[RMDB]
RNA sequence: GGGAACGACUCGAGUAGAGUCGAAAAAGACAUUGGAACACUAUACCUAUUAUUCGGCGCAUGAGCUGGAGUCCUAGGCACAGCUCUAAGCCUCCUUAUUCGAGCCGAGCUGGGCCAGCCAGGCAACGUUCAGUCGCCAGUUCGCUGGCGACUGAACAAAAGAAACAACAACAACAAC
Reactivity to 2A3 in 0.01 (KOAc 150mM, MgCl2 10mM, bicine 150mM(pH8.5), 24C), signal-to-noise 2, nucleotides 027 to 126: a000g150a030c110a090u070u170g060g000a130a060c060a030c150u100a080u110a210c010c000u030a030u190u070a190u060u090c000g020g000c040g020c100a060u140g030a000g070c010u010g000g000a010g150u040c030c110u060a020g020g000c000a000c010a030g000c000u000c000u000a010a040g000c020c010u020c000c000u060u190a150u300u200c090g030a000g030c060c000g000a000g030c040u000g000g160g010c060c000a040g120c030c000a030g030g050c020a080a030c090